Background: Chemical mapping of a 207-nucleotide RNA with 2A3. For 2A3 the reverse transcriptase was SuperScript II with manganese. Conditions: 150 mM KOAc, 10 mM MgCl2 and 150 mM bicine (pH 8.5), 24 C.

RNA sequence: GGGAACGACUCGAGUAGAGUCGAAAAUGGUUUCAGGAUGAAACUCUUGCACCUCAGAUCAUCAGGCAUUAUUAGAUUCUCAUAAGGAGCACACAACUUAGAUCCUUUGCAUGGACAGUUCACAAUAGGAUUCAUGCUCCUAUGAGAAUCUAAUGCCCCCGUUGGCUUUAUUCGUAAAGCCAACGGGAAAAGAAACAACAACAACAAC
Reactivity to 2A3 in 0.01 (KOAc 150mM, MgCl2 10mM, bicine 150mM(pH8.5), 24C), signal-to-noise 1, nucleotides 027 to 156: u040g020g050u020u010u030c080a090g090g060a100u210g060a020a080a110c120u080c080u130u160g100c080a020c010c030u120c090a080g010a060u060c010a000u060c080a030g040g050c000a020u000u080a010u020u070a260g000a030u000u000c000u020c010a000u040a220a190g000g010a000g000c020a010c010a010c030a300a000c060u080u100a030g000a080u040c020c000u060u010u050g060c060a100u150g050g070a140c100a210g080u140u180c100a060c000a110a060u120a220g000g010a040u000u210c020a030u090g050c000u000c000c000u000a010u010g000a000g010a000a000u000c000u000a000a000u000g010c010c000